Chemical mapping of a 207-nucleotide RNA with DMS and 2A3. For 2A3 the reverse transcriptase was SuperScript II with manganese. The RNA was probed in 150 mM KOAc, 10 mM MgCl2 and 150 mM bicine (pH 8.5) at 24 C. For DMS the reverse transcriptase was MarathonRT.
RNA sequence: GGGAACGACUCGAGUAGAGUCGAAAAUAACAAUCUGGAGGUCCAUGCAUGUCAGUUGUCAACAGGCAAUAAUGAUGAGCACACCUUAUAUGACAGCCUUAAUCUACUGCUUUUCUAGGUAUCAAGGUCUAAUGCAACACGUAGAGGACUUAGUCAGUGCCUAGUACAUAUUCGUAUGUACUAGGCAAAAAGAAACAACAACAACAAC
Reactivity to DMS in 0.01 (KOAc 150mM, MgCl2 10mM, bicine 150mM(pH8.5), 24C), signal-to-noise 3, nucleotides 027 to 156: u010a110a150c070a080a070u000c070u010g010g010a060g020g020u000c030c090a110u000g030c030a080u000g010u000c030a050g050u000u000g020u000c020a070a110c260a120g040g000c000a050a070u000a050a150u000g010a040u010g000a080g020c010a110c070a040c010c020u000u000a120u010a110u000g010a070c020a070g000c020c050u010u000a060a110u000c040u000a040c030u010g010c040u000u000u000u010c040u000a090g010g010u000a080u010c060a090a070g020g010u000c030u000a070a090u000g030c040a060a040c040a030c080g020u000a050g000a130g010g000a040c030u000u000a090g030u000c030a060g020
Reactivity to 2A3 in 0.01 (KOAc 150mM, MgCl2 10mM, bicine 150mM(pH8.5), 24C), signal-to-noise 5, nucleotides 027 to 156: u130a020a040c050a010a070u030c020u050g080g010a010g020g040u030c060c050a030u040g030c030a030u100g010u030c020a030g000u010u010g040u020c080a140a150c150a300g010g000c030a020a010u170a090a130u080g020a020u050g010a020g000c000a020c000a020c030c010u080u060a120u020a050u170g040a030c030a020g010c010c000u080u090a060a080u060c060u090a050c020u040g070c010u090u060u030u000c020u020a010g040g020u070a040u130c060a050a070g040g000u000c020u080a070a020u060g030c040a050a030c030a050c130g010u020a010g020a040g020g020a030c030u050u060a030g060u050c040a020g000